Description: An RNA of 207 nucleotides, treated with 2A3 and read out base by base. Conditions: 150 mM KOAc, 10 mM MgCl2 and 150 mM bicine (pH 8.5), 24 C. For 2A3 the reverse transcriptase was SuperScript II with manganese. Reactivities are given for positions 27 through 156. Source: RMDB library VIROID, as collected in RNAgym.

RNA sequence: GGGAACGACUCGAGUAGAGUCGAAAAUCUCGAGUUCCUCUAACUUCUUUCUUCCAUUCACCCACUGCUCGAGAACCUCUUCCCUGCCUCCGCGACUUUUCUUCGAUUCGGAGCGGCUCAUCCCAGCAAAGGGCGGGGGUCCUCAGUGCUCUUACUCGUUAGAGUGGAAGUUCGCUUCCACUCUAACAAAAGAAACAACAACAACAAC
Reactivity to 2A3 in 0.01 (KOAc 150mM, MgCl2 10mM, bicine 150mM(pH8.5), 24C), signal-to-noise 2, nucleotides 027 to 156: u030c010u000c010g010a040g050u060u020c070c030u030c010u080a090a110c070u140u090c040u080u200u020c030u070u030c070c030a150u020u130c060a110c000c020c020a080c100u080g030c010u060c070g010a020g020a050a060c000c000u030c000u030u000c000c000c000u000g060c030c020u080c020c010g030c010g100a070c040u150u220u140u090c090u110u150c060g130a200u090u080c030g000g010a040g010c120g010g000c020u020c000a160u050c020c020c020a010g000c050a140a100a000g000g020g020c020g010g000g010g000g010u000c010c000u000c000a030g000u030g030c020u020c020u120u120a100c040u070c090